Source: RMDB library OK3TST, as collected in RNAgym. The record gives the reactivity of an RNA of 207 nucleotides to DMS and 2A3. 2A3 adducts were read by reverse transcription with SuperScript II with manganese. Reactivities are given for positions 27 through 156. For DMS, 2,617 sequencing reads were counted. The RNA was probed in 150 mM KOAc, 10 mM MgCl2 and 150 mM bicine (pH 8.5) at 24 C.

RNA sequence: GGGAACGACUCGAGUAGAGUCGAAAACAGCAAAAGUACAGUAUCAUAAUCUUGGGGGACCACUGUCUUAUAUUGGUCCCUCAAGCAAAACAUGAUUACACAGUGCAUGAUUGUAUAGGAAAGUAUCUUUCUAAAACCCUUCACACCCCUGUGUGUACGAGGUAAAUAUGUUCGCAUAUUUACCUCGAAAAGAAACAACAACAACAAC
Reactivity to DMS in 0.01 (KOAc 150mM, MgCl2 10mM, bicine 150mM(pH8.5), 24C), signal-to-noise 2, nucleotides 027 to 156: c030a080g020c120a050a080a100a140g000u000a080c040a100g010u000a140u000c030a050u000a150a180u000c020u000u000g010g010g010g010g060a010c030c040a040c130u000g020u000c120u000u010a120u000a110u000u000g030g070u000c010c000c000u000c020a000a010g000c080a060a060a060a120c130a080u000g000a120u000u010a080c020a100c100a100g030u010g010c080a060u000g000a180u000u020g020u010a110u030a230g000g000a060a020a120g020u000a080u000c040u000u010u000c000u000a050a100a100a170c210c010c010u000u000c030a040c030a060c040c020c020c060u000g020u000g010u010g020u000a160
Reactivity to 2A3 in 0.01 (KOAc 150mM, MgCl2 10mM, bicine 150mM(pH8.5), 24C), signal-to-noise 4, nucleotides 027 to 156: c010a000g070c030a020a080a040a000g030u030a020c010a050g040u030a010u040c000a010u030a130a090u050c000u000u010g010g000g000g010g000a000c000c010a030c060u090g080u150c100u230u180a190u050a070u210u050g000g000u000c000c000c000u000c000a000a020g000c020a000a000a000a010c040a020u010g000a010u050u140a020c050a000c060a050g030u010g010c030a020u050g040a110u080u080g020u060a050u090a090g030g020a040a030a000g020u100a120u110c050u000u010u020c010u010a040a090a140a150c010c000c000u060u090c030a030c000a010c020c110c020c100u080g050u020g000u000g020u050a060